Record summary
This 177-nucleotide RNA was probed chemically with 2A3 and DMS. For 2A3 the reverse transcriptase was SuperScript II with manganese. Source: RMDB libraries RFM100 and RFMREP, as collected in RNAgym. Values are in units of 0.01, from 0 to 300, in steps of 10.

RNA sequence: GGGAACGACUCGAGUAGAGUCGAAAAAGUUGGUGCAGUGAAUAAGGUAGUAAGCGUGAUGCCUUAGGGUGCAUGCCGAUGAGUCAUCAUUGACCUAGUGUGAUUCUACCGAUAUAGAUUAGGCGCACUCUACUCCGUCUUUCGAGACGGAGUAGAGAAAAGAAACAACAACAACAAC
Reactivity to 2A3 in 0.01 (KOAc 150mM, MgCl2 10mM, bicine 150mM(pH8.5), 24C), signal-to-noise 1, nucleotides 027 to 126: a000g160u140u120g000g030u030g010c050a040g000u010g200a020a000u030a060a010g040g000u010a000g000u010a020a010g000c010g000u030g070a230u050g050c000c020u040u040a280g010g040g020u010g030c000a000u020g030c000c030g030a050u200g070a010g130u130c020a010u010c000a000u000u010g090a070c010c000u000a010g010u010g000u010g000a010u140u040c010u020a000c000c010g000a020u010a000u000a270g000a010u010u000a000g000g000c000g000c000a000
Reactivity to DMS in 0.01 (KOAc 150mM, MgCl2 10mM, bicine 150mM(pH8.5), 24C), signal-to-noise 4, nucleotides 027 to 126: a110g000u010u000g000g030u010g000c000a180g040u070g000a000a010u000a300a160g000g000u000a000g010u010a300a170g010c050g040u000g010a080u030g000c020c000u000u040a110g030g010g050u010g000c030a000u000g000c020c010g010a200u010g030a200g010u040c190a010u000c000a010u010u000g000a180c010c000u000a010g030u000g010u020g010a020u040u000c010u000a010c010c000g010a080u030a010u010a020g000a010u000u010a020g000g000c030g040c030a150